RNA sequence: GGGAACGACUCGAGUAGAGUCGAAAAAUAGUGUUAUUCGUAACACUAUAUAUCCGAACUCAAGGAUUCGUUCCAGAGACAUGCAUGCUACCAUGAAAGCAACUGAACAAGCGUUCGCGCUUGUUAACGACAUAUUCGAAUUCGUUCGAAUAUGUCGAAAAGAAACAACAACAACAAC
Reactivity to DMS in 0.01 (KOAc 150mM, MgCl2 10mM, bicine 150mM(pH8.5), 24C), signal-to-noise 5, nucleotides 027 to 126: a010u000a010g010u000g000u000u000a030u010u010c200g010u000a010a010c000a010c000u000a010u000a020u010a150u000c100c010g010a080a050c010u000c010a070a210g010g010a020u000u010c010g000u000u000c010c010a090g000a110g000a080c110a050u000g030c100a050u010g010c050u000a090c120c040a060u010g000a090a070a080g010c090a040a090c180u010g010a040a020c000a000a010g010c000g030u000u010c230g030c010g020c000u000u000g000u000u000a040a130
Reactivity to 2A3 in 0.01 (KOAc 150mM, MgCl2 10mM, bicine 150mM(pH8.5), 24C), signal-to-noise 7, nucleotides 027 to 126: a000u010a000g000u010g010u020u010a030u030u050c230g040u040a010a000c000a000c000u000a000u000a000u010a010u020c060c020g010a180a070c000u000c020a040a070g120g000a020u030u000c010g010u020u000c000c000a020g030a000g020a110c060a040u140g060c010a020u080g010c030u040a090c080c020a100u140g110a130a050a010g020c010a050a050c070u140g040a000a000c010a000a010g000c010g030u060u090c220g010c010g000c080u000u000g000u000u020a040a020
The record gives the reactivity of an RNA of 177 nucleotides to DMS and 2A3. For 2A3 the reverse transcriptase was SuperScript II with manganese. Conditions: 150 mM KOAc, 10 mM MgCl2 and 150 mM bicine (pH 8.5), 24 C. Reactivities are given for positions 27 through 126.